RNA sequence: GGGAACGACUCGAGUAGAGUCGAAAACCCCAGCUGCCUCUCCUCCAUCGCACUUCAGAAGUGCUGCGAUGGGCAGAAGGGCAGCUGACACUCCGUGAUGUCCCUCAUUCUGUGUUCCUCCGUGAGCACGGGUGCCUCUGUUCGCAGAGGCACCCGUAAAAGAAACAACAACAACAAC
Reactivity to 2A3 in 0.01 (KOAc 150mM, MgCl2 10mM, bicine 150mM(pH8.5), 24C), signal-to-noise 1, nucleotides 027 to 126: c000c000c000c030a000g040c050u000g000c000c000u150c000u000c000c000u110c000c000a000u000c000g010c000a030c030u210u000c040a070g090a290a020g150u120g100c260u030g020c020g010a000u000g030g000g000c000a000g000a040a030g040g000g000c000a000g000c000u000g030a000c000a030c000u050c020c030g000u010g070a050u070g000u010c000c010c000u000c000a110u300u000c000u090g070u060g070u020u010c000c020u090c040c070g010u150g030a000g070c000